[RMDB]
RNA sequence: GGGAACGACUCGAGUAGAGUCGAAAACAUUACGAAUUCAGUCGCAAAUUGUAGAUUUAGCUACUCUACGAUUUAGUGAGCGUUAGUAACGUUGUAAUAUAAUAUAGUCUUUGGAAGGAUUAUAUUGGAGCCGCGGACAAGUUCGCUUGUCCGCGAACUAUCCCGUGUUGUUCGCAACACGGGAUAGAAAAGAAACAACAACAACAAC
Reactivity to DMS in 0.01 (KOAc 150mM, MgCl2 10mM, bicine 150mM(pH8.5), 24C), signal-to-noise 1, nucleotides 027 to 156: c040a080u000u010a030c010g020a090a110u020u000c060a070g020u010c020g010c000a050a030a020u000u020g020u000a020g020a080u000u000u000a220g020c100u030a060c170u000c010u000a000c020g000a030u000u000u020a120g020u020g020a040g010c080g010u000u010a070g000u000a020a070c050g040u000u010g000u000a090a080u000a170u000a030a010u000a020u000a000g010u000c000u000u000u000g010g020a240a250g000g000a010u000u010a000u000a040u000u000g020g010a200g000c100c010g010c020g000g030a010c000a020a200g000u020u010c300g060c030u020u000g000u000c020c010g060c040g010a010a040
Reactivity to 2A3 in 0.01 (KOAc 150mM, MgCl2 10mM, bicine 150mM(pH8.5), 24C), signal-to-noise 4, nucleotides 027 to 156: c010a050u100u140a040c020g090a090a110u210u160c060a100g050u010c020g010c020a010a000a000u010u020g010u010a000g000a040u040u090u150a030g040c070u080a040c020u010c000u000a000c000g000a000u000u000u090a060g000u010g040a080g100c020g010u040u110a020g010u040a080a070c060g000u000u030g030u060a090a090u100a090u020a180a000u000a000u010a000g010u000c030u040u120u180g200g020a160a110g020g000a000u000u000a020u010a010u020u010g030g040a060g110c090c020g000c020g000g000a010c000a000a010g020u040u160c200g070c130u010u000g000u000c020c000g010c000g000a000a010
An RNA of 207 nucleotides, treated with DMS and 2A3 and read out base by base. The DMS profile rests on 1,701 reads. The RNA was probed in 150 mM KOAc, 10 mM MgCl2 and 150 mM bicine (pH 8.5) at 24 C. The data come from the RNA Mapping Database (RMDB), library M2RFPK.